Chemical mapping of a 207-nucleotide RNA with 2A3. For 2A3 the reverse transcriptase was SuperScript II with manganese. Conditions: 150 mM KOAc, 10 mM MgCl2 and 150 mM bicine (pH 8.5), 24 C.
[RMDB]
RNA sequence: GGGAACGACUCGAGUAGAGUCGAAAAGUGCGUGGACGACUCGAUCGGGUUACCGUUGAGACGUGCGACCACCCCAGAAAUCGCUGUAUCGUCGUUCCACUCCCGGGGAUCCAGAUGCGCAGUGAUACGGUGUUGGGCGACAGUGGUGCGUCCAAGCGGUUCAACGUUUUUUCGAAAACGUUGAACCAAAAGAAACAACAACAACAAC
Reactivity to 2A3 in 0.01 (KOAc 150mM, MgCl2 10mM, bicine 150mM(pH8.5), 24C), signal-to-noise 1, nucleotides 027 to 156: g150u100g040c090g040u050g020g100a020c000g030a010c000u020c080g030a100u120c070g030g040g000u050u090a110c020c000g040u030u030g000a050g000a050c030g070u040g000c040g030a030c010c000a060c000c040c000c000a000g130a000a160a000u030c040g000c040u040g000u100a140u170c010g010u000c000g010u020u010c010c000a090c080u020c060c040c030g010g010g020g000a040u000c070c030a050g000a130u130g050c030g000c100a000g080u030g040a000u030a060c040g060g000u130g100u190u070g020g000g000c050g030a050c030a060g090u070g030g010u170g030c000g020u000c000c010a010a030g080c060